[RMDB]
RNA sequence: GGGAACGACUCGAGUAGAGUCGAAAAAGCGUGGUUGGGUGCCGUCGCCGCAGACCCGCGACAUGAACCCGAUCUACACCGGCAAGGACGUCUCCUACAUCGACACCAAACAAGCCAACCGGGCCGCGUACGCUAAAACAUUCGUGUUUUAGCGUACAAAAGAAACAACAACAACAAC
Reactivity to 2A3 in 0.01 (KOAc 150mM, MgCl2 10mM, bicine 150mM(pH8.5), 24C), signal-to-noise 3, nucleotides 027 to 126: a000g040c030g030u040g020g040u010u030g030g000g040u020g060c070c040g030u040c010g010c030c040g060c050a060g080a260c000c020c050g000c010g000a020c030a050u160g050a030a030c000c000c010g010a000u000c040u100a030c030a020c030c030g040g010c050a070a110g050g000a040c030g050u010c020u000c040c010u040a050c030a120u110c050g020a040c030a020c090c050a070a090a060c030a100a050g030c020c010a010a030c050c010g000g010g030c020c000g030c020
Reactivity to DMS in 0.01 (KOAc 150mM, MgCl2 10mM, bicine 150mM(pH8.5), 24C), signal-to-noise 4, nucleotides 027 to 126: a080g020c070g030u000g010g020u000u010g020g000g040u000g000c180c190g020u000c060g020c030c070g020c070a100g010a080c080c070c080g000c030g010a040c030a050u000g000a190a050c020c010c010g000a030u000c030u000a070c100a110c050c010g000g000c090a100a110g000g010a100c050g000u000c040u000c030c010u010a060c120a080u000c090g000a050c070a080c050c030a070a070a100c110a070a120g000c060c030a040a120c070c020g010g020g030c040c090g030c190
An RNA of 177 nucleotides, treated with 2A3 and DMS and read out base by base.
The RNA was probed in 150 mM KOAc, 10 mM MgCl2 and 150 mM bicine (pH 8.5) at 24 C.
Reactivities are given for positions 27 through 126.
For 2A3, 4,381 sequencing reads were counted.
DMS (dimethyl sulfate) methylates the pairing face of unpaired adenines and cytosines.
2A3 adducts were read by reverse transcription with SuperScript II with manganese.
The data come from the RNA Mapping Database (RMDB), library OK2TRN.